Chemical mapping of a 177-nucleotide RNA with DMS and 2A3. DMS adducts were read by reverse transcription with MarathonRT. For 2A3, 256 sequencing reads were counted. 2A3 adducts were read by reverse transcription with SuperScript II with manganese. Source: RMDB library RFM100, as collected in RNAgym. The RNA was probed in 150 mM KOAc, 10 mM MgCl2 and 150 mM bicine (pH 8.5) at 24 C.

[RMDB]
RNA sequence: GGGAACGACUCGAGUAGAGUCGAAAAACUAAUAUUUAAUACAAUUAAAAUUUUUGGUCGAAAAUGUUCGUUCCUUUUAAGGAGUUUUAGAUGCGAUGUUUUUCUUGCAGUAAUGCAAGAAGAGGAGAAUGUUCAGGUAAUUCGUUACCUGAACAUUAAAAGAAACAACAACAACAAC
Reactivity to DMS in 0.01 (KOAc 150mM, MgCl2 10mM, bicine 150mM(pH8.5), 24C), signal-to-noise 1, nucleotides 027 to 126: a100c050u000a010a140u110a120u030u000u010a050a080u080a300c010a130a090u000u000a060a140a050a110u000u000u000u000u000g000g020u010c000g050a020a070a040a020u020g020u020u010c020g000u000u010c010c000u000u050u020u030a000a120g000g000a150g010u000u010u030u000a060g110a050u000g010c070g010a080u000g000u010u000u010u010u000c000u010u010g000c000a000g000u040a070a080u000g000c000a000a010g020a010a060g000a060g000g000a130g000
Reactivity to 2A3 in 0.01 (KOAc 150mM, MgCl2 10mM, bicine 150mM(pH8.5), 24C), signal-to-noise 1, nucleotides 027 to 126: a000c080u110a090a120u120a250u260u000u130a180a110u250a080c040a040a090u160u210a010a080a120a200u030u040u010u030u020g090g000u000c010g040a020a000a120a100u110g080u240u080c020g040u040u030c000c000u000u070u020u090a120a080g150g100a130g020u030u030u030u190a050g010a150u130g040c050g000a150u020g120u010u000u110u000u000c020u000u010g020c000a020g090u150a170a000u020g000c020a000a000g010a000a000g000a050g010g060a040g110